This 207-nucleotide RNA was probed chemically with 2A3.

RNA sequence: GGGAACGACUCGAGUAGAGUCGAAAACGCUGGGAGAGGUUGAAGACAUGCGUGUACUGAAGCGCGCACGGUACCACGCAACAGCUUCACCCUCUCCUGUGCUGAAGCGCGCACGGCAACCGAAAGGUGCGAAAAGAAGGUCUGUUCGCAGACCUUCGCCAAGAGUCACCUUCGGGUGACUCUUGGCAAAAGAAACAACAACAACAAC
Reactivity to 2A3 in 0.01 (KOAc 150mM, MgCl2 10mM, bicine 150mM(pH8.5), 24C), signal-to-noise 1, nucleotides 027 to 156: c030g000c040u120g020g020g000a000g020a000g090g000u000u000g010a030a000g000a050c070a210u300g040c000g000u000g010u000a000c000u070g080a160a070g000c020g000c020g020c000a010c030g000g000u000a020c110c110a030c120g000c060a190a140c020a150g040c000u000u000c000a000c000c000c000u000c000u000c000c000u000g000u010g000c020u090g050a110a040g020c050g000c000g020c000a000c020g030g000c060a070a100c000c000g010a130a030a000g000g020u090g040c060g010a030a150a080a110g030a000a000g000g020u030c010u010g030u050u120c300g040c100a000g020a020c000c000u010u000c000